[RMDB]
RNA sequence: GGGAACGACUCGAGUAGAGUCGAAAAUCCCCAUAGUUCGCUAUGGGGAAAAGGCGUACCGCGUAGCACGCGGAUAGGAGCGAAGAUAUCCACGGCACGCGAAAACCUUCGCCUUCGGGCGAAGGAACACUCAGCAGGAGUUCGCUCCUGCUGAGUGAAAAGAAACAACAACAACAAC
Reactivity to DMS in 0.01 (KOAc 150mM, MgCl2 10mM, bicine 150mM(pH8.5), 24C), signal-to-noise 1, nucleotides 027 to 126: u000c000c000c000c000a000u000a020g010u010u020c210g010c000u000a010u000g000g030g010g000a010a000a020a030g010g010c110g020u000a100c150c020g000c020g020u000a120g020c000a130c050g050c050g000g010a030u000a050g010g040a130g000c090g020a100a120g000a120u000a000u000c010c010a010c010g020g020c020a050c010g000c020g020a070a020a050a080c000c000u000u000c010g000c000c000u000u020c210g020g010g000c000g000a020a030g010g000a030a090
Reactivity to 2A3 in 0.01 (KOAc 150mM, MgCl2 10mM, bicine 150mM(pH8.5), 24C), signal-to-noise 1, nucleotides 027 to 126: u020c000c000c000c000a000u000a000g010u000u020c200g050c110u010a000u030g010g000g000g060a000a060a000a050g090g020c080g040u030a060c000c010g020c010g030u000a020g090c060a070c280g000c000g000g000a030u010a010g100g030a110g050c100g030a040a020g030a140u060a030u030c010c010a030c020g030g000c010a010c020g000c010g070a040a010a020a070c000c000u000u000c000g010c000c000u010u030c170g110g000g000c000g000a000a000g000g000a020a000
This 177-nucleotide RNA was probed chemically with DMS and 2A3.
Conditions: 150 mM KOAc, 10 mM MgCl2 and 150 mM bicine (pH 8.5), 24 C.